[RMDB]
RNA sequence: GGGAACGACUCGAGUAGAGUCGAAAACAUCUAUCGGACGCAAAUUUGGACACUCCAUCAAGGUGGAGGACUCGUACGCAUCAGAAUCCUACUUUGCCUUCUCUAAGGAUGCGUAUGUCGAGGGUGCCGAACAGUCACAGGCUAUGCGCAAAGUCCACCCAGACAUAGGAUUCGUCCUAUGUCUGGGAAAAGAAACAACAACAACAAC
Reactivity to DMS in 0.01 (KOAc 150mM, MgCl2 10mM, bicine 150mM(pH8.5), 24C), signal-to-noise 1, nucleotides 027 to 156: c060a120u000c100u010a030u040c070g000g060a070c070g070c030a130a010a130u000u000u000g060g000a110c080a110c000u010c020c030a040u010c020a130a130g060g050u000g010g020a080g040g030a030c040u000c000g020u000a030c050g000c010a040u000c050a130g000a100a050u000c000c020u010a030c110u010u000u010g040c060c070u000u000c010u000c130u000a160a070g010g020a030u000g020c050g080u000a000u010g000u020c030g040a100g010g010g010u000g010c030c020g050a110a090c020a070g000u000c040a050c070a060g010g020c000u000a050u010g000c140g040c000a030a040a150g070u000c040c010a200
Reactivity to 2A3 in 0.01 (KOAc 150mM, MgCl2 10mM, bicine 150mM(pH8.5), 24C), signal-to-noise 3, nucleotides 027 to 156: c020a090u100c060u140a060u100c070g030g030a050c000g030c090a080a080a120u140u070u150g020g000a030c020a040c050u030c010c020a050u030c070a080a080g200g000u020g000g020a040g020g010a000c010u030c030g030u020a000c000g000c000a000u000c010a030g110a110a070u070c040c040u040a060c050u010u130u100g040c020c010u090u060c080u010c020u090a040a080g110g000a000u000g010c000g000u000a030u060g110u010c030g020a060g010g030g080u050g020c020c010g030a050a040c050a080g090u090c040a040c020a150g000g050c050u030a040u120g040c080g000c000a090a070a010g020u020c010c000a010